[RMDB]
RNA sequence: GGGAACGACUCGAGUAGAGUCGAAAAAUACAGUGUAACAGUACCAAUUAUCAACAUGUGUUGAGAACCAGAAAAAUGUUCUUUUUCUUUGAUCAGCAACACUAUUUGGGAAAAUCUAUCCUCAGGGCGGUAACGGUAUAUUCGUAUACCGUUACCGAAAAGAAACAACAACAACAAC
Reactivity to 2A3 in 0.01 (KOAc 150mM, MgCl2 10mM, bicine 150mM(pH8.5), 24C), signal-to-noise 4, nucleotides 027 to 126: a000u200a030c090a040g080u040g030u170a120a060c030a050g040u010a030c030c000a050a050u140u070a150u240c030a030a150c020a130u130g000u000g020u010u010g020a050g020a050a030c050c020a030g080a020a010a010a020a000u190g070u290u190c020u020u030u000u010u010c000u070u070u090g050a070u040c040a040g110c010a010a020c000a010c020u020a060u020u030u040g030g000g020a000a070a000a020u010c030u060a090u050c010c000u030c060a050g070g030g000
Reactivity to DMS in 0.01 (KOAc 150mM, MgCl2 10mM, bicine 150mM(pH8.5), 24C), signal-to-noise 4, nucleotides 027 to 126: a130u010a080c160a100g020u010g010u010a110a120c120a090g010u000a150c020c020a050a060u010u000a140u000c170a050a100c180a110u010g000u010g000u000u000g000a150g010a070a080c110c170a020g000a000a030a000a000a010u010g000u010u020c040u000u000u000u000u000c000u000u000u000g020a040u010c120a100g000c030a010a010c010a020c000u000a100u010u000u000g000g000g000a100a040a050a080u000c060u000a090u010c010c000u000c080a080g010g000g010